RNA sequence: GGGAACGACUCGAGUAGAGUCGAAAAGAUAUGGAAGUUCUACCCACCGAUAUUUUCUCGAUGAAAUGCCAUUUAUCGGAAACGAUAAAUGGCAUGGAGAGAUCAUAUCGAGGAACUUCCUAAGUCACCAUAGAUACAGCUUCGGCUGUAUCUAUGGAAAAGAAACAACAACAACAAC
Reactivity to DMS in 0.01 (KOAc 150mM, MgCl2 10mM, bicine 150mM(pH8.5), 24C), signal-to-noise 2, nucleotides 027 to 126: g020a100u030a130u030g010g000a010a000g010u000u000c000u010a160c060c030c060a300c300c000g040a030u000a000u000u010u020u000c000u000c000g040a230u010g010a100a130a000u010g020c000c000a030u010u000u000a010u000c000g000g020a070a050a230c000g000a010u000a000a010a040u000g000g010c010a000u000g020g000a120g010a000g010a000u000c020a040u010a010u000c000g030a090g000g000a000a000c010u000u000c000c000u000a020a110g010u010c260a120
Chemical mapping of a 177-nucleotide RNA with DMS.
Reactivities are given for positions 27 through 126.
The reactions ran in a buffer of 150 mM KOAc, 10 mM MgCl2 and 150 mM bicine (pH 8.5), at 24 C.